This 177-nucleotide RNA was probed chemically with DMS and 2A3. DMS adducts were read by reverse transcription with MarathonRT. For DMS, 3,070 sequencing reads were counted. It was measured as part of the RMDB library TTRDEL. For 2A3 the reverse transcriptase was SuperScript II with manganese.
RNA sequence: GGGAACGACUCGAGUAGAGUCGAAAAGAUAUGGAAUGUGAUAGGGAGAAGUGUCGGAAACGACCUUCAUCGAUCUAUACAUUCCUAAGUCAAAAUCUUUAGAUCCACUUCGGUGGAUCUAAAGAAACUCUGGUAAUAUGUUCGCAUAUUACCAGAGAAAAGAAACAACAACAACAAC
Reactivity to DMS in 0.01 (KOAc 150mM, MgCl2 10mM, bicine 150mM(pH8.5), 24C), signal-to-noise 3, nucleotides 027 to 126: g020a030u000a300u000g000g000a020a010u000g020u010g010a030u000a000g000g010g000a050g010a020a010g010u030g020u000c000g020g000a070a030a200c000g000a010c020c000u000u000c000a140u010c120g010a080u030c000u000a000u010a020c000a010u000u000c000c010u000a010a070g010u000c020a090a070a120a100u000c000u000u000u000a000g000a010u000c000c000a000c000u000u010c210g020g030u000g000g000a000u010c000u000a000a000a000g000a040a080a100
Reactivity to 2A3 in 0.01 (KOAc 150mM, MgCl2 10mM, bicine 150mM(pH8.5), 24C), signal-to-noise 3, nucleotides 027 to 126: g030a000u050a010u160g000g010a000a000u020g030u140g180a050u030a020g110g090g000a050g000a010a000g070u120g010u300c010g000g040a040a040a030c000g000a000c010c000u000u020c020a150u170c010g050a040u040c000u010a000u010a010c000a000u010u000c010c000u000a070a000g030u020c020a040a010a020a300u030c010u010u000u000a000g010a000u000c000c010a010c010u070u090c300g080g000u000g000g000a000u000c000u000a000a000a000g000a000a000a000